[RMDB]
RNA sequence: GGGAACGACUCGAGUAGAGUCGAAAAAGUUAGGUUCGCUAUGGUGCAACUCUUUAAGGCAAUAACGAACUAAUUCUAAGCAAGUAAUGGAGAAGUGCCAGGGUCACUAUCUAGCCAUAAUAGUGCUGUAAGUGACUUAGAUUCGUCUAAGUCACAACAUUUAAGAGUCUUUCGAGACUCUUAAAUGAAAAGAAACAACAACAACAAC
Reactivity to 2A3 in 0.01 (KOAc 150mM, MgCl2 10mM, bicine 150mM(pH8.5), 24C), signal-to-noise 9, nucleotides 027 to 156: a010g070u060u050a050g020g080u020u010c010g010c020u030a030u080g100g060u070g060c060a120a160c060u090c090u180u250u210a110a060g050g000c020a040a040u050a110a040c030g010a010a000c010u020a010a020u100u090c070u130a070a010g030c030a030a040g040u120a080a040u040g020g020a030g010a070a020g010u010g030c030c060a070g050g030g010u080c010a010c020u060a150u120c010u030a030g050c000c000a020u040a130a050u050a130g110u040g030c040u030g050u110a180a080g000u000g000a000c000u000u000a000g000a000u020u030c090g020u000c120u000a000a000g000u000c000a010c000a000a010
Reactivity to DMS in 0.01 (KOAc 150mM, MgCl2 10mM, bicine 150mM(pH8.5), 24C), signal-to-noise 6, nucleotides 027 to 156: a070g010u000u000a080g020g010u000u000c020g030c010u000a030u000g030g010u000g030c020a100a140c100u010c110u000u000u000a080a110g020g020c030a080a050u000a030a040c030g010a030a050c020u000a040a070u000u000c060u000a100a140g020c050a070a150g000u010a060a080u010g000g000a110g000a070a140g030u000g020c030c030a120g020g030g020u000c030a050c030u000a060u000c020u000a120g010c030c030a080u010a050a090u000a090g000u010g030c020u000g010u010a050a120g030u000g010a040c000u000u000a010g010a070u000u010c300g010u000c000u000a000a010g010u000c000a000c000a050a090
Structure probing data (2A3 and DMS) for a 207-nucleotide construct. Conditions: 150 mM KOAc, 10 mM MgCl2 and 150 mM bicine (pH 8.5), 24 C. The data come from the RNA Mapping Database (RMDB), library M2RFPK. For 2A3, 11,189 sequencing reads were counted. DMS adducts were read by reverse transcription with MarathonRT. Values cover nucleotides 27 to 156.